[RMDB]
RNA sequence: GGGAACGACUCGAGUAGAGUCGAAAACGGCGGCGGUGACGUUGGCGGCAUCGAUGGAACGCCGCAUCGCGGUAAGCGCGGCUUCGCGCAGCAGCGCCACACAGUCGGCGGCACUAUAACCGUCGAGAUCACAGCGGAUAUUCGUAUCCGCUGUGAUAAAAGAAACAACAACAACAAC
Reactivity to DMS in 0.01 (KOAc 150mM, MgCl2 10mM, bicine 150mM(pH8.5), 24C), signal-to-noise 3, nucleotides 027 to 126: c070g000g000c030g000g040c060g000g010u010g020a080c040g000u020u010g010g020c040g000g000c060a120u010c090g010a210u020g020g010a120a060c070g000c020c020g010c010a050u010c090g040c020g000g020u040a080a160g000c010g010c000g030g010c180u010u000c060g010c050g020c010a110g010c010a090g030c020g010c010c030a060c130a090c130a130g000u000c020g000g000c000g020g030c050a040c130u050a130u040a130a140c000c000g020u000c000g010a070g010
Reactivity to 2A3 in 0.01 (KOAc 150mM, MgCl2 10mM, bicine 150mM(pH8.5), 24C), signal-to-noise 6, nucleotides 027 to 126: c010g020g000c010g000g000c010g030g040u010g020a070c040g020u030u040g050g020c000g020g020c020a060u060c060g180a120u130g070g070a150a050c050g000c040c010g000c020a040u150c070g010c040g040g080u160a130a060g030c050g000c010g080g020c080u190u260c060g000c010g000c020a000g010c000a020g040c010g000c020c020a010c010a000c010a030g080u030c000g010g010c000g000g000c060a030c070u200a130u070a190a020c010c010g000u000c010g000a010g020

The record gives the reactivity of an RNA of 177 nucleotides to DMS and 2A3. The 2A3 profile rests on 4,669 reads. It was measured as part of the RMDB library OK1LIB.